[RMDB]
The record gives the reactivity of an RNA of 177 nucleotides to DMS. The reactions ran in a buffer of 150 mM KOAc, 10 mM MgCl2 and 150 mM bicine (pH 8.5), at 24 C. DMS adducts were read by reverse transcription with MarathonRT. The DMS profile rests on 8,764 reads.
RNA sequence: GGGAACGACUCGAGUAGAGUCGAAAACCAUAGGAUUUCGAUCCUAUGGCCUGCUUUGUCGCGUAAUAGCUUUUCGACUCUACUUGGGUCGUUCCCACGCGAUGGGGACCGGUUUCGACCGGUCCAAUAGAUUACCAUGAUUCGUCAUGGUAAUCUAAAAAGAAACAACAACAACAAC
Reactivity to DMS in 0.01 (KOAc 150mM, MgCl2 10mM, bicine 150mM(pH8.5), 24C), signal-to-noise 5, nucleotides 027 to 126: c000c000a010u000a000g000g010a020u000u000u020c180g010a030u000c000c000u000a000u000g000g010c180c110u010g000c040u000u000u000g020u010c160g000c170g010u010a080a060u010a040g010c030u000u000u000u000c010g010a020c000u000c000u000a000c000u000u000g000g000g000u000c000g000u000u010c000c000c000a010c050g020c140g000a100u010g010g010g010g010a020c000c000g020g000u000u000u010c200g010a030c010c000g010g010u000c000c000a010a020

The data come from the RNA Mapping Database (RMDB), library M2PK50.